[RMDB]
RNA sequence: GGGAACGACUCGAGUAGAGUCGAAAAAGACGGGGUUUCACCAUGUUAGCCAGCCUGGUCUCGAACUUCUGACCUUAGGUGAUCCGCCCUCCUCGGCCUCCAAAAGUGCUGGGAUUAUAGGCAUGAGCACAUAGAGUACGUUCGCGUACUCUAUGUGAAAAGAAACAACAACAACAAC
Reactivity to DMS in 0.01 (KOAc 150mM, MgCl2 10mM, bicine 150mM(pH8.5), 24C), signal-to-noise 5, nucleotides 027 to 126: a080g010a080c090g010g020g000g000u000u000u000c030a060c030c020a070u010g010u010u010a110g010c040c030a050g000c130c080u010g000g010u000c030u010c110g010a090a090c120u000u000c030u010g000a070c040c040u000u010a070g010g010u000g000a040u000c030c030g010c040c010c030u000c040c010u000c040g010g000c020c010u000c050c060a050a050a060a090g020u000g010c020u000g010g000g010a100u000u000a060u010a040g020g000c020a040u010g000a100g020
Reactivity to 2A3 in 0.01 (KOAc 150mM, MgCl2 10mM, bicine 150mM(pH8.5), 24C), signal-to-noise 3, nucleotides 027 to 126: a000g100a020c100g010g040g000g010u010u080u030c010a020c000c020a030u140g050u100u150a030g030c000c010a000g010c000c030u040g000g020u030c020u030c070g110a160a120c060u190u090c030u150g100a100c010c000u030u090a060g020g000u020g040a030u060c020c020g150c030c030c000u030c000c000u000c010g040g010c010c000u080c040c010a110a080a030a040g100u100g040c010u040g000g010g030a030u120u090a130u130a070g000g030c050a060u100g030a010g020